[RMDB]
RNA sequence: GGGAACGACUCGAGUAGAGUCGAAAAGAUAUGGAAAGGGAACUACAUGCUCUUUGGUUCCCGUUGAAAUACGUCCGUCGGAAACGACGGACGUAUGGAGGGAACGAGCAUGCCCUUUCCUAAGUCAUCUUAAUAGAACGUUCGCGUUCUAUUAAGAAAAAGAAACAACAACAACAAC
Reactivity to DMS in 0.01 (KOAc 150mM, MgCl2 10mM, bicine 150mM(pH8.5), 24C), signal-to-noise 3, nucleotides 027 to 126: g010a030u000a260u000g010g020a010a010a020g010g010g000a130a010c060u020a300c010a010u000g000c010u000c010u000u020u020g060g010u000u000c000c000c000g000u010u020g030a170a140a010u000a010c000g000u010c000c000g060u000c000g010g000a070a080a190c000g010a010c000g010g000a010c000g000u000a000u000g000g030a120g000g000g000a010a010c040g010a020g000c000a010u000g000c000c000c000u010u000u000c000c000u000a010a070g010u010c020a180
Reactivity to 2A3 in 0.01 (KOAc 150mM, MgCl2 10mM, bicine 150mM(pH8.5), 24C), signal-to-noise 2, nucleotides 027 to 126: g010a020u050a040u160g000g020a030a000a020g040g010g030a060a020c090u150a030c300a010u010g000c010u070c040u270u300u300g170g010u070u000c020c010c000g000u040u070g030a000a010a010u010a010c010g000u010c010c010g000u030c020g020g030a060a030a060c030g020a000c000g000g000a000c000g000u010a000u010g010g030a010g000g000g000a000a000c010g000a010g000c000a000u010g000c020c000c010u020u000u000c000c000u010a020a000g030u010c010a070